This 177-nucleotide RNA was probed chemically with DMS and 2A3.
RNA sequence: GGGAACGACUCGAGUAGAGUCGAAAAGAUCCGGUGGCCUGCGUGGACUGUGGUGCCUGCGUAACCGCCUGCCCGGUCAGCGCGAUCGCGCCGAACACCCGGUUGGACUUCGAGCAGCUGCCGUUCGAUGACUCCACUCUUUCGAGAGUGGAGUCAUAAAAGAAACAACAACAACAAC
Reactivity to DMS in 0.01 (KOAc 150mM, MgCl2 10mM, bicine 150mM(pH8.5), 24C), signal-to-noise 2, nucleotides 027 to 126: g020a090u000c140c030g010g030u000g030g020c150c070u010g040c010g070u000g020g000a030c000u000g020u030g030g010u000g070c080c030u010g000c010g020u000a100a040c060c030g000c020c040u010g000c040c140c140g030g010u020c000a010g020c180g050c050g000a020u010c050g010c020g000c010c090g020a100a130c010a070c010c000c030g000g000u000u000g020g000a120c200u020u020c090g010a240g000c010a050g010c000u000g000c020c010g000u000u000c100g020
Reactivity to 2A3 in 0.01 (KOAc 150mM, MgCl2 10mM, bicine 150mM(pH8.5), 24C), signal-to-noise 1, nucleotides 027 to 126: g070a020u040c020c010g010g000u000g050g040c070c160u040g000c040g030u140g050g010a010c030u000g090u240g100g030u020g040c000c010u010g000c020g020u020a060a070c000c000g000c010c010u010g000c070c230c010g040g120u230c060a040g020c000g010c010g120a030u050c080g010c000g000c000c030g020a060a010c000a010c000c000c010g000g080u020u000g130g120a140c040u060u100c200g110a040g000c000a010g000c000u050g040c000c000g030u050u080c000g010

Values cover nucleotides 27 to 126. The DMS profile rests on 1,441 reads. The reactions ran in a buffer of 150 mM KOAc, 10 mM MgCl2 and 150 mM bicine (pH 8.5), at 24 C.